[RMDB]
Record summary: This 177-nucleotide RNA was probed chemically with DMS and 2A3. The RNA was probed in 150 mM KOAc, 10 mM MgCl2 and 150 mM bicine (pH 8.5) at 24 C. 2A3 adducts were read by reverse transcription with SuperScript II with manganese. The 2A3 profile rests on 1,482 reads. DMS (dimethyl sulfate) methylates the pairing face of unpaired adenines and cytosines. For DMS, 1,269 sequencing reads were counted.
RNA sequence: GGGAACGACUCGAGUAGAGUCGAAAACAGAGGUGCCUACUGAUAUGGCAGAAUUACUUGAUUACAUCUACAGCAUAGCCGUGCAAAUAUGGGUCGCUGUAAUCAAGAGCAUGACUGCACCUGAGACAGUCAGACAAGCAUUCGUGCUUGUCUGACUAAAAGAAACAACAACAACAAC
Reactivity to DMS in 0.01 (KOAc 150mM, MgCl2 10mM, bicine 150mM(pH8.5), 24C), signal-to-noise 2, nucleotides 027 to 126: c070a060g010a020g020g020u000g020c000c070u040a220c150u040g010a120u000a140u000g000g000c060a020g000a080a070u000u000a100c010u000u000g010a000u000u000a000c000a030u000c020u000a020c010a060g000c020a050u000a040g020c130c130g000u010g000c210a060a110a130u000a010u000g000g030g010u000c100g050c170u000g000u000a010a000u000c000a000a020g020a120g020c090a050u010g020a180c100u000g000c000a080c060c020u000g010a120g000a180c080
Reactivity to 2A3 in 0.01 (KOAc 150mM, MgCl2 10mM, bicine 150mM(pH8.5), 24C), signal-to-noise 2, nucleotides 027 to 126: c030a010g090a040g010g000u050g000c030c010u100a080c020u050g070a080u070a090u200g110g000c030a030g070a080a070u190u110a050c000u010u010g000a010u000u020a000c000a020u050c010u000a020c020a040g120c020a060u020a030g150c060c100g140u100g090c050a120a170a010u090a040u070g080g020g000u040c010g000c000u000g000u030a000a010u010c000a000a000g000a030g100c040a010u050g050a040c060u020g030c020a040c000c000u050g000a020g020a010c040